RNA sequence: GGGAACGACUCGAGUAGAGUCGAAAAGACGUCGCACUUGUAUGCCCGGGGCCAAAACCGAAACUUGGCCCUGGUUUCGGCGACUGGAACGUUCCACGGUACAAAUAUGACCCGGUGGAUAAGUGCGCAGUUUUAGGUCGUUCGCGACCUAAAACUGAAAAGAAACAACAACAACAAC
Reactivity to DMS in 0.01 (KOAc 150mM, MgCl2 10mM, bicine 150mM(pH8.5), 24C), signal-to-noise 2, nucleotides 027 to 126: g020a120c120g000u050c000g030c020a000c020u000u010g030u020a050u070g020c300c000c010g050g050g020g000c020c020a020a020a110a150c110c100g020a070a030a020c090u000u020g000g030c000c020c030u000g000g020u000u000u010c020g000g000c000g000a000c140u000g010g010a130a280c120g030u020u000c000c010a040c060g000g000u010a080c190a010a050a020u020a050u030g030a070c100c010c060g000g020u000g000g040a050u010a010a050g000u000g000c080g010
Reactivity to 2A3 in 0.01 (KOAc 150mM, MgCl2 10mM, bicine 150mM(pH8.5), 24C), signal-to-noise 2, nucleotides 027 to 126: g070a050c080g030u070c000g000c000a010c030u030u070g040u140a040u220g120c040c010c000g000g000g030g000c030c000a000a010a030a090c080c120g200a070a040a120c020u000u070g020g020c000c000c000u000g000g010u000u030u010c010g010g000c000g030a000c030u070g080g000a080a010c090g080u080u000c000c000a010c060g000g020u210a120c110a060a130a050u210a150u120g040a090c020c010c050g050g000u040g010g010a000u040a040a060g010u050g030c000g000
Record summary
The record gives the reactivity of an RNA of 177 nucleotides to DMS and 2A3. It was measured as part of the RMDB library OK1LIB. The 2A3 profile rests on 1,232 reads. For DMS, 2,530 sequencing reads were counted.